[RMDB]
RNA sequence: GGGAACGACUCGAGUAGAGUCGAAAAGAGAACAUUAUCGAAAACGCGUGCCUGACGGCGCAGCUGGAGCAGCUGUCGGCGCUGAUCGCGAGCAAGCCGCUACGCAGCGCGCCGCCCUGCCUCAUUAUGCUGGAUACGCAUCUGCAGCUCGCGCGGGAAUCAACCCCAACUUCGGUUGGGGUUGAUUAAAAGAAACAACAACAACAAC
Reactivity to 2A3 in 0.01 (KOAc 150mM, MgCl2 10mM, bicine 150mM(pH8.5), 24C), signal-to-noise 1, nucleotides 027 to 156: g030a010g080a070a050c100a190u190u210a130u300c220g070a070a070a000a000c000g000c060g000u010g000c000c000u100g000a060c010g020g000c010g000c010a010g000c050u010g010g030a000g000c000a000g010c120u020g090u140c020g040g000c000g000c020u070g060a070u270c080g000c040g000a030g000c020a040a040g170c100c080g040c090u170a160c010g000c010a030g060c000g050c020g020c000c000g040c000c000c010u000g000c010c030u000c030a200u060u300a140u230g000c020u010g110g080a240u090a160c030g050c000a070u060c010u060g040c040a010g000c040u130c040g050c000g000c030g000g000g070